Structure probing data (2A3 and DMS) for a 177-nucleotide construct.
Source: RMDB library RFM100, as collected in RNAgym.
The RNA was probed in 150 mM KOAc, 10 mM MgCl2 and 150 mM bicine (pH 8.5) at 24 C.
[RMDB]
RNA sequence: GGGAACGACUCGAGUAGAGUCGAAAAGUGUGGAAGACACUGAAGGACCUAAACUAACAAAGGUAAACGGCUCAGUGUGCGGGGUAUUACACUCGGUUUAAUGUCUGAAUGCGAUAAUCCGCACGAUCAUGGAUCUCCCAUUCGUGGGAGAUCCAUGAAAAGAAACAACAACAACAAC
Reactivity to 2A3 in 0.01 (KOAc 150mM, MgCl2 10mM, bicine 150mM(pH8.5), 24C), signal-to-noise 3, nucleotides 027 to 126: g020u000g000u030g020g090a080a020g080a020c000a000c050u030g010a160a150g040g020a060c010c020u080a110a110a040c050u140a020a050c040a210a120a000g050g050u150a080a090a000c000g050g000c000u000c050a090g010u040g020u000g160c030g000g020g000g000u080a010u000u070a020c050a060c020u010c000g010g090u020u070u140a070a050u150g050u120c000u010g080a040a060u080g030c000g070a030u030a050a010u010c000c000g000c020a000c050g040a030u020
Reactivity to DMS in 0.01 (KOAc 150mM, MgCl2 10mM, bicine 150mM(pH8.5), 24C), signal-to-noise 1, nucleotides 027 to 126: g000u010g000u000g050g000a220a100g000a050c020a020c020u000g000a240a050g000g000a050c040c000u010a040a080a100c070u000a160a080c240a110a170a130g000g010u030a000a040a030c080g020g000c010u000c090a030g000u050g000u000g060c000g000g000g010g000u000a000u000u020a040c000a000c050u000c050g030g000u000u000u020a160a150u040g020u000c010u040g000a000a000u000g000c020g000a000u010a000a010u010c010c020g000c010a010c020g000a100u000